[RMDB]
RNA sequence: GGGAACGACUCGAGUAGAGUCGAAAAGUACACACCUGUGCACGGGAUGUUAACGGGAGAGCGAGCGGCCGAUAAUCACUGAGAUCUCUUCAACAACUUGUUCGGGUGAAGUCAGUGAAUGUACUGCGAUUAUCCGCCUAUUCGUAGGCGGAUAAUCAAAAGAAACAACAACAACAAC
Reactivity to DMS in 0.01 (KOAc 150mM, MgCl2 10mM, bicine 150mM(pH8.5), 24C), signal-to-noise 5, nucleotides 027 to 126: g030u020a040c080a120c080a110c090c040u020g010u040g000c060a070c070g010g000g000a120u010g010u020u030a090a110c110g010g010g000a040g010a100g030c020g010a050g000c070g000g000c060c060g000a050u030a060a150u010c020a030c010u000g000a050g000a110u010c020u010c010u040u050c160a030a050c080a090a120c190u030u020g020u000u000c180g010g000g030u000g000a020a070g020u010c010a030g000u010g000a070a110u010g000u000a070c020u000g000c290
Reactivity to 2A3 in 0.01 (KOAc 150mM, MgCl2 10mM, bicine 150mM(pH8.5), 24C), signal-to-noise 6, nucleotides 027 to 126: g040u050a030c040a000c010a000c060c020u050g010u050g040c050a030c090g070g000g020a080u030g020u080u070a080a040c030g030g020g000a060g000a010g020c040g020a010g000c020g040g020c020c020g020a040u160a150a050u090c020a030c030u000g010a040g040a120u020c010u000c000u160u150c020a040a040c020a090a100c110u160u180g020u100u070c090g010g000g000u020g050a030a030g100u020c010a000g020u020g060a060a060u100g040u060a020c020u060g050c040
Structure probing data (DMS and 2A3) for a 177-nucleotide construct. Source: RMDB library OK1LIB, as collected in RNAgym. The RNA was probed in 150 mM KOAc, 10 mM MgCl2 and 150 mM bicine (pH 8.5) at 24 C.